Notes:
This 177-nucleotide RNA was probed chemically with DMS and 2A3. For 2A3, 1,014 sequencing reads were counted. Reactivities are rounded to 0.1 and cut off at 0 and 3. In probing experiments dimethyl sulfate is read out at A N1 and C N3, which are open when not base-paired.
RNA sequence: GGGAACGACUCGAGUAGAGUCGAAAACGGGGAGAUGUUGAUAAAGCCCAUGAAUGAUGUCAACGUCCACUUAAAACUAGAGAGCUUGCUGAAAGCUAAUCCAAUUAAUGUGACUAAAGAACAGCAGUGCAUGAUGAUGUUUCGACAUCAUCAUGCAAAAAGAAACAACAACAACAAC
Reactivity to DMS in 0.01 (KOAc 150mM, MgCl2 10mM, bicine 150mM(pH8.5), 24C), signal-to-noise 2, nucleotides 027 to 126: c100g000g000g000g000a100g010a060u040g000u000u000g010a130u050a030a110a180g000c080c030c010a190u000g000a080a130u030g010a020u050g000u000c000a020a140c080g050u000c070c080a130c070u000u020a060a010a100a090c150u020a050g000a130g020a110g010c000u000u000g020c150u050g000a080a000a010g000c000u000a050a100u000c000c090a050a120u000u010a040a030u010g020u000g000a080c050u030a030a040a120g000a040a050c010a040g020c020a060g020
Reactivity to 2A3 in 0.01 (KOAc 150mM, MgCl2 10mM, bicine 150mM(pH8.5), 24C), signal-to-noise 3, nucleotides 027 to 126: c070g010g030g020g040a060g060a130u020g020u090u070g000a000u080a210a170a080g130c010c010c010a030u130g170a060a120u110g000a000u040g010u020c000a000a000c020g020u010c000c060a040c050u070u130a060a030a080a000c040u080a050g000a000g010a000g070c050u000u030g020c020u100g080a100a000a000g000c000u000a000a070u050c050c010a020a180u040u280a100a050u190g090u050g130a010c030u280a250a000a020g020a060a000c020a000g020c000a030g060